[RMDB]
RNA sequence: GGGAACGACUCGAGUAGAGUCGAAAACAGUACGUUAUCUUCUGUCAAACAGCAGAUACGGCACAUGCUAACAACAUUAACAGAUUUAAUGUUGCAAUCACUCGUGCCCAAAAAGGUAUUCUUUGUGUAGCGGUCCUGUUCGCAGGACCGAAAAGAAACAACAACAACAAC
Reactivity to DMS in 0.01 (KOAc 150mM, MgCl2 10mM, bicine 150mM(pH8.5), 24C), signal-to-noise 3, nucleotides 027 to 129: c040a000g060u010a050c130g030u040u060a010u000c050u020u030c000u020g000u030c210a060a080a260c050a050g040c060a080g000a010u030a050c070g000g060c040a020c050a030u050g030c040u040a000a000c030a000a020c020a030u010u020a000a030c110a130g060a160u110u000u000a010a000u020g030u050u010g000c170a000a000u030c100a110c100u030c080g000u000g040c030c010c080a020a000a000a010a000g130g060u150a080u000u060c040u020u000u020g000u060g000u010a080g020
Reactivity to 2A3 in 0.01 (KOAc 150mM, MgCl2 10mM, bicine 150mM(pH8.5), 24C), signal-to-noise 5, nucleotides 027 to 129: c010a000g070u150a000c030g040u080u060a020u000c000u010u000c000u000g050u040c050a080a170a190c000a130g020c000a010g000a030u030a030c020g000g000c000a000c000a050u060g000c020u100a100a040c000a000a000c000a020u000u000a000a000c020a130g180a240u040u010u030a000a000u010g000u000u000g050c030a030a040u060c030a010c040u060c050g020u000g010c000c040c000a050a050a000a000a000g220g010u150a200u110u040c040u000u090u100g110u040g020u090a030g110